[RMDB]
RNA sequence: GGGAACGACUCGAGUAGAGUCGAAAAGAUAUGGACGAUCGUCCACAGCGUUGAAAUCGGAAACGAUGGAGCUGGAGACGAGUCGUCCUAAGUCAGACAUGGACCAGUGUUCGCACUGGUCCAUGAAGUUCCGUAAUGGGUUCGCCCAUUACGGAACAAAAGAAACAACAACAACAAC
Reactivity to 2A3 in 0.01 (KOAc 150mM, MgCl2 10mM, bicine 150mM(pH8.5), 24C), signal-to-noise 2, nucleotides 027 to 126: g010a030u070a030u110g010g000a000c020g010a000u010c010g000u000c010c010a120c010a100g000c020g290u300u060g050a050a030a020u010c000g030g020a060a050a030c020g000a000u020g040g000a010g020c010u000g000g020a070g000a020c010g040a020g190u060c000g000u000c000c000u010a030a000g010u000c030a000g040a200c030a000u010g000g010a000c000c030a000g020u000g040u090u180c300g070c120a000c010u020g010g000u000c030c000a000u000g010a010a010
Reactivity to DMS in 0.01 (KOAc 150mM, MgCl2 10mM, bicine 150mM(pH8.5), 24C), signal-to-noise 3, nucleotides 027 to 126: g000a040u000a300u000g010g000a030c000g000a100u010c000g010u010c000c270a160c020a000g010c000g000u000u000g000a090a090a020u000c010g020g000a130a050a190c000g000a000u000g000g000a110g010c010u010g000g010a300g000a020c000g000a030g010u000c000g000u000c010c000u000a000a040g010u000c030a140g020a250c000a000u000g010g000a010c000c000a000g000u000g010u000u000c300g000c010a000c000u000g000g010u010c010c000a000u000g000a070a090